[RMDB]
RNA sequence: GGGAACGACUCGAGUAGAGUCGAAAACACCUGUGACGAUCUGUUUGAGUUCAGCAACGUCUCCAGCUGCAUAUACAUUCUCAACGUUUGUCUGUCCAUAUUCAUCUACUGCGACUGCCCCAGCUGUUCCAAGCUCAAUUGAUGUCUCUGUGAGUAAUGGACUGAGGUAAUUCGUUACCUCAGUCCAAAAAGAAACAACAACAACAAC
Reactivity to DMS in 0.01 (KOAc 150mM, MgCl2 10mM, bicine 150mM(pH8.5), 24C), signal-to-noise 1, nucleotides 027 to 156: c070a100c030c010u010g030u000g000a100c060g000a080u010c020u020g040u010u000u000g010a150g060u020u010c000a000g040c040a070a110c030g020u020c030u000c080c060a110g000c040u010g040c060a060u000a140u000a070c080a110u010u010c020u010c000a070a110c140g010u000u000u000g020u000c020u030g010u000c000c060a080u000a120u000u000c060a070u000c010u000a040c030u010g020c040g010a070c020u000g020c000c010c000c050a020g040c030u000g010u000u020c010c010a080a240g000c010u000c030a050a100u000u030g000a100u000g020u000c010u010c030u000g000u010g040a110g050u000a070a230
Reactivity to 2A3 in 0.01 (KOAc 150mM, MgCl2 10mM, bicine 150mM(pH8.5), 24C), signal-to-noise 1, nucleotides 027 to 156: c060a050c010c060u030g070u110g030a030c060g000a080u030c080u110g140u130u070u060g070a080g030u180u050c000a000g020c050a060a040c090g070u020c050u040c000c030a010g010c000u020g090c120a030u090a020u060a220c060a110u170u060c040u010c020a100a120c050g040u050u120u000g000u000c060u050g020u000c010c010a050u040a140u140u040c020a090u000c080u070a070c040u000g000c010g040a020c020u080g000c010c010c050c000a010g030c000u010g010u020u020c010c020a010a020g060c000u030c080a000a010u100u120g030a030u030g050u000c010u020c050u040g070u060g030a020g180u300a070a060
The record gives the reactivity of an RNA of 207 nucleotides to DMS and 2A3. The DMS profile rests on 2,385 reads. For 2A3 the reverse transcriptase was SuperScript II with manganese. Conditions: 150 mM KOAc, 10 mM MgCl2 and 150 mM bicine (pH 8.5), 24 C. Values cover nucleotides 27 to 156.